Chemical mapping of a 207-nucleotide RNA with 2A3 and DMS. The RNA was probed in 150 mM KOAc, 10 mM MgCl2 and 150 mM bicine (pH 8.5) at 24 C. DMS adducts were read by reverse transcription with MarathonRT.
RNA sequence: GGGAACGACUCGAGUAGAGUCGAAAAUCUCGUACACUCGAUCACACUCACGAUCACGUGAGUUCACGAGUGUGAGUACACACGUACACACUCGAGUGAACGAGAGUACACACUCACGUGAGAUCGUUCUCGUGAUCGAUCGUGAUCUCGUGAACACCUCGUUAGCAAAGUUCGCUUUGCUAACGAGAAAAGAAACAACAACAACAAC
Reactivity to 2A3 in 0.01 (KOAc 150mM, MgCl2 10mM, bicine 150mM(pH8.5), 24C), signal-to-noise 7, nucleotides 027 to 156: u010c010u010c020g010u020a020c020a010c010u010c010g040a050u080c020a020c010a020c020u040c010a040c040g090a190u110c070a070c230g080u060g040a050g020u060u070c090a090c090g020a030g000u000g000u010g010a040g000u030a010c180a020c060a010c160g010u030a010c040a000c010a010c030u020c010g020a020g020u000g020a020a010c000g000a010g000a000g040u090a020c090a000c010a010c030u000c000a010c020g080u140g030a020g030a160u050c010g010u050u000c020u010c030g010u050g000a010u020c020g020a060u060c100g050u110g050a040u000c040u020c040g100u090g060a060a010c020a060c080
Reactivity to DMS in 0.01 (KOAc 150mM, MgCl2 10mM, bicine 150mM(pH8.5), 24C), signal-to-noise 2, nucleotides 027 to 156: u030c000u000c050g050u000a160c000a030c000u000c000g020a150u010c000a050c040a140c010u000c030a070c030g010a210u000c190a120c050g030u030g000a130g000u020u000c020a070c130g000a010g000u000g020u020g000a090g010u000a170c030a110c300a200c130g010u000a140c010a140c070a120c080u000c020g000a070g000u010g010a100a080c000g000a020g040a100g000u000a120c070a140c100a080c030u000c000a020c010g010u000g000a180g000a120u000c020g030u010u000c080u000c060g000u000g000a040u000c010g000a070u000c100g000u000g020a040u000c040u010c020g000u010g000a120a120c040a140c070